[RMDB]
RNA sequence: GGGAACGACUCGAGUAGAGUCGAAAAGAUAUGGACGUCAUUAGGGAGACGGUGGUCGGAAACGACCAUUCGUCAUCGAUCUAAGACGUCCUAAGUCAAAAGUGUUACCGUGUUCGCACGGUAACACCACGCAAAAGGGGUUCGCCCCUUUUGCGUGAAAAGAAACAACAACAACAAC
Reactivity to 2A3 in 0.01 (KOAc 150mM, MgCl2 10mM, bicine 150mM(pH8.5), 24C), signal-to-noise 1, nucleotides 027 to 126: g000a030u040a010u050g000g000a000c010g020u020c190a300u010u090a010g020g030g080a260g010a030c020g000g020u010g000g000u000c020g000g000a030a000a000c000g000a000c030c010a000u060u020c000g040u000c000a040u210c130g090a030u000c000u000a040a110g000a000c000g000u000c000c000u000a010a000g020u010c010a000a000a030a210g000u000g000u010u000a010c000c030g000u010g000u030u090c300g020c130a000c000g000g000u010a000a000c000a000c010
Reactivity to DMS in 0.01 (KOAc 150mM, MgCl2 10mM, bicine 150mM(pH8.5), 24C), signal-to-noise 2, nucleotides 027 to 126: g000a020u000a050u010g010g010a020c000g020u000c000a150u000u000a010g000g010g000a080g010a030c000g000g030u000g000g000u000c000g000g000a000a000a030c000g010a000c000c000a020u000u010c000g060u010c010a130u010c300g010a100u010c000u000a020a050g000a020c010g030u000c000c000u000a000a060g000u000c000a110a100a090a160g000u000g010u010u000a010c000c000g010u000g020u000u000c270g020c010a000c000g010g000u000a000a000c000a000c020
Structure probing data (2A3 and DMS) for a 177-nucleotide construct. It was measured as part of the RMDB library TTRDES. For 2A3, 3,231 sequencing reads were counted. Conditions: 150 mM KOAc, 10 mM MgCl2 and 150 mM bicine (pH 8.5), 24 C.